[RMDB]
RNA sequence: GGGAACGACUCGAGUAGAGUCGAAAAGAUAUGGACUAAGGCGCGAUAAGAUGAUGUCGGAAACGACAUUCAUCUUUUGACGCGCCUUAGUCCUAAGUCAAAAGGGUAACACUUCGGUGUUACCCAAGUUAGCUGGAAUGUUCGCAUUCCAGCUAACAAAAGAAACAACAACAACAAC
Reactivity to DMS in 0.01 (KOAc 150mM, MgCl2 10mM, bicine 150mM(pH8.5), 24C), signal-to-noise 1, nucleotides 027 to 126: g000a000u010a040u000g000g000a020c000u000a010a020g000g020c010g030c010g020a170u010a000a020g000a010u010g000a010u000g020u010c010g000g000a010a000a030c000g010a010c000a010u010u010c010a000u000c000u010u000u000u000g000a190c030g000c000g000c000c000u000u000a000g010u010c010c000u000a000a000g000u010c010a080a110a100a120g000g020g010u000a010a000c000a000c000u000u020c190g040g000u000g000u000u000a020c000c010c000a010a000
An RNA of 177 nucleotides, treated with DMS and read out base by base. DMS (dimethyl sulfate) methylates the pairing face of unpaired adenines and cytosines. It was measured as part of the RMDB library TTRDEL. Reactivities are given for positions 27 through 126. The RNA was probed in 150 mM KOAc, 10 mM MgCl2 and 150 mM bicine (pH 8.5) at 24 C.